An RNA of 207 nucleotides, treated with DMS and 2A3 and read out base by base.
The DMS profile rests on 3,831 reads.
The 2A3 profile rests on 4,772 reads.

RNA sequence: GGGAACGACUCGAGUAGAGUCGAAAAGUGAGUGGCUUUAUCAACCGAAACCAUCUAAUCAUGUCAUUAAAUGCACAGUUAAAUACCAGAAUCGUUUAAGCCCAGUGGAAAGAUGAGGUGCACUGAAAACAGAUUCAUUCCUGUGUCCAUUCUUCCACAGUGCUAAAAUGUUCGCAUUUUAGCACUGAAAAGAAACAACAACAACAAC
Reactivity to DMS in 0.01 (KOAc 150mM, MgCl2 10mM, bicine 150mM(pH8.5), 24C), signal-to-noise 2, nucleotides 027 to 156: g010u000g020a090g020u000g030g010c020u000u000u000a090u010c110a030a160c070c060g010a100a110a110c070c000a070u000c020u000a050a100u000c070a080u000g000u000c030a080u010u010a060a070a100u000g030c070a090c000a050g000u010u000a040a060a060u000a100c030c010a090g020a030a090u000c050g040u000u000u000a050a150g000c030c030c010a140g010u000g030g030a030a010a150g030a080u000g010a080g030g030u000g000c020a060c040u000g000a050a070a070a170c080a100g030a100u010u000c070a150u000u000c060c060u000g050u000g000u010c020c020a210u010u000c020u000u000c020c070a130
Reactivity to 2A3 in 0.01 (KOAc 150mM, MgCl2 10mM, bicine 150mM(pH8.5), 24C), signal-to-noise 6, nucleotides 027 to 156: g100u080g040a030g030u040g010g020c020u030u080u090a120u100c050a030a100c060c030g040a070a020a010c040c010a030u060c050u110a110a030u090c060a050u090g080u060c040a100u090u190a080a110a060u110g000c030a010c000a040g010u050u120a060a100a050u120a120c080c040a030g030a020a030u040c040g030u020u050u100a040a030g010c000c020c020a020g000u040g030g060a110a100a070g050a050u110g030a070g040g040u040g000c020a010c030u030g010a010a030a050a020c040a040g040a050u050u070c010a020u090u080c020c020u040g000u000g020u050c040c010a050u060u000c000u040u000c030c000a030